An RNA of 207 nucleotides, treated with DMS and 2A3 and read out base by base. The DMS profile rests on 1,826 reads. For 2A3 the reverse transcriptase was SuperScript II with manganese. The data come from the RNA Mapping Database (RMDB), library OK3TST. The 2A3 profile rests on 1,896 reads.

RNA sequence: GGGAACGACUCGAGUAGAGUCGAAAACGGAGCCACCACCCUCAUCCUGGUAACCAACACCGUCGCGGGCAGGCAGUGGAAGCGGGAACUGGUGGAGCGGACCUCGCUGACCGAGGAGGAGAUCGGCGAGUACUCCGGUGAGCAGAAGCAGAUCCGCAUUAGUAUUAGCCUUCGGGCUAAUACUAAUAAAAGAAACAACAACAACAAC
Reactivity to DMS in 0.01 (KOAc 150mM, MgCl2 10mM, bicine 150mM(pH8.5), 24C), signal-to-noise 1, nucleotides 027 to 156: c060g030g030a110g000c000c000a040c000c010a070c010c030c040u000c040a100u000c050c060u000g030g010u000a140a110c060c030a140a230c030a010c020c010g030u000c020g000c050g020g000g070c030a110g030g010c030a020g040u000g010g000a100a130g010c140g020g020g010a070a120c110u010g020g000u000g020g000a080g020c020g010g000a130c210c000u000c020g020c000u000g000a070c040c000g000a100g000g030a150g010g020a300g000a040u000c030g020g010c010g010a120g020u000a080c080u000c000c030g020g030u020g010a180g010c050a040g040a210a120g000c050a040g070a150u000c000c010g030c120
Reactivity to 2A3 in 0.01 (KOAc 150mM, MgCl2 10mM, bicine 150mM(pH8.5), 24C), signal-to-noise 3, nucleotides 027 to 156: c020g010g020a000g030c030c010a020c010c000a010c010c000c030u070c020a050u050c010c020u080g060g070u130a070a090c030c030a070a070c070a040c070c010g120u200c100g010c080g060g000g020c050a050g050g000c040a040g020u080g080g020a080a030g040c050g000g020g030a060a090c110u110g000g000u010g000g000a000g020c000g000g010a030c010c010u000c000g000c020u020g000a030c020c060g090a140g110g040a040g010g040a050g010a090u020c010g030g000c000g020a000g000u020a050c000u010c000c030g010g030u060g060a020g020c060a030g020a160a010g020c020a010g020a080u030c010c000g000c000